[RMDB]
RNA sequence: GGGAACGACUCGAGUAGAGUCGAAAAAGCUGGAGGCCAUUAUUCUAAGUGAAGUAAUUCAAGAAUGGAAAACCAAAUGCCGUAUGUUCUUACCUAUAAGUGGGAGCUAAGCUAUGAGGAUGCAAAGGCCUAAGAAUGAUAUAUUGGACUUUGGGGAGUAUUAUAAUAGCUUCGGCUAUUAUAAUACAAAAGAAACAACAACAACAAC
Reactivity to 2A3 in 0.01 (KOAc 150mM, MgCl2 10mM, bicine 150mM(pH8.5), 24C), signal-to-noise 2, nucleotides 027 to 156: a000g060c070u070g020g060a030g010g100c030c020a040u080u140a050u150u070c040u070a160a000g020u020g090a040a040g040u120a050a070u120u070c080a050a090g010a100a050u070g020g050a010a060a080a090c020c030a020a050a040u030g010c010c010g020u050a060u110g010u050u000c010u030u040a040c020c010u120a090u050a300a020g020u050g010g000g000a020g010c010u030a070a000g020c020u010a060u090g020a030g040g000a010u050g030c030a100a000a010g020g020c010c020u010a000a000g060a060a050u050g030a000u060a040u020a040u210u060g020g000a010c010u070u050u060g030g000g030g000a090
Reactivity to DMS in 0.01 (KOAc 150mM, MgCl2 10mM, bicine 150mM(pH8.5), 24C), signal-to-noise 1, nucleotides 027 to 156: a110g020c040u010g000g000a140g060g050c030c030a080u000u000a060u000u000c010u000a070a140g000u000g010a080a080g010u000a080a120u010u000c020a040a070g010a120a090u010g010g030a030a080a060a090c030c010a050a060a080u010g030c010c030g040u000a080u000g030u000u000c020u000u010a050c000c040u000a100u000a050a110g030u000g010g070g000a030g000c000u000a030a100g010c100u000a080u000g010a110g000g000a070u030g040c000a030a060a050g060g000c000c030u000a060a060g010a100a050u000g000a090u000a090u000a100u010u000g020g010a090c050u000u000u000g020g000g000g020a190

This 207-nucleotide RNA was probed chemically with 2A3 and DMS. The reactions ran in a buffer of 150 mM KOAc, 10 mM MgCl2 and 150 mM bicine (pH 8.5), at 24 C. It was measured as part of the RMDB library OK3TST. The DMS profile rests on 1,811 reads. Reactivities are rounded to 0.1 and cut off at 0 and 3.